[RMDB]
An RNA of 177 nucleotides, treated with 2A3 and read out base by base. Reactivities are given for positions 27 through 126.

RNA sequence: GGGAACGACUCGAGUAGAGUCGAAAAAAAACGAUGUUUACUGGUUAAAGAGAGUGCCAGCAUCAAGAGCCUUUUGUGGUGCAUCACUGGCGCGCCACCGUUAGACCAUCCGUGCCCCAGAUGCCAAAGUGUUCCUUGUCUUCGGACAAGGAACACUAAAAGAAACAACAACAACAAC
Reactivity to 2A3 in 0.01 (KOAc 150mM, MgCl2 10mM, bicine 150mM(pH8.5), 24C), signal-to-noise 1, nucleotides 027 to 126: a000a000a000a000c100g000a020u000g010u080u140u150a160c020u050g080g040u150u300a260a240a000g210a010g070a010g000u040g090c000c000a060g000c000a050u030c060a020a020g010a010g000c000c050u090u050u080u190g150u070g060g000u000g020c000a000u070c000a020c070u020g060g010c000g000c000g020c000c050a010c000c000g000u010u040a000g000a000c010c010a000u000c010c120g000u050g220c060c020c000c000a000g260a110u060g080c020c000a000a080